[RMDB]
RNA sequence: GGGAACGACUCGAGUAGAGUCGAAAAGUUCGCAUGGUGCACUAUUGUGUUAUUAGUAACUAAGUAUGCUUACAAUCGAAAAUGUUUAACCAUAAAAGGGUAAAAUGGUGUAAGACAGUCUGAUACUUUACGGCUUCACGUUUCGACGUGAAGCCAAGUAGAGUCGAAUGUUCGCAUUCGACUCUACAAAAGAAACAACAACAACAAC
Reactivity to 2A3 in 0.01 (KOAc 150mM, MgCl2 10mM, bicine 150mM(pH8.5), 24C), signal-to-noise 2, nucleotides 027 to 156: g060u070u070c040g000c120a040u080g100g010u030g100c000a000c040u090a180u170u250g020u000g040u100u070a060u060u090a050g070u070a110a000c030u010a030a020g060u060a010u110g010c000u010u010a030c030a120a080u040c050g060a000a140a000a040u080g040u090u060u080a010a000c010c000a010u110a080a110a030a010g100g000g000u090a070a060a030a150u080g020g010u010g030u030a070a000g020a070c000a030g010u010c050u120g080a060u060a240c040u000u020u070a040c050g000g000c000u000u000c000a000c000g010u060u040u060c170g110a050c040g000u000g000a010a000g000c000c010a000a000
Reactivity to DMS in 0.01 (KOAc 150mM, MgCl2 10mM, bicine 150mM(pH8.5), 24C), signal-to-noise 1, nucleotides 027 to 156: g040u000u000c050g050c050a240u000g060g000u000g020c010a030c060u000a040u000u000g020u010g000u020u000a020u000u000a100g020u020a070a070c080u010a020a130g000u040a190u000g010c000u000u020a050c040a090a110u010c000g000a140a020a070a090u000g000u000u000u010a070a060c010c010a070u000a040a090a130a190g010g000g020u000a010a090a050a030u000g010g050u000g040u000a020a100g000a080c080a060g000u010c040u010g010a140u000a060c040u000u010u000a120c140g070g030c000u000u000c000a010c010g010u000u010u000c300g020a110c030g050u000g000a030a010g040c000c000a000a060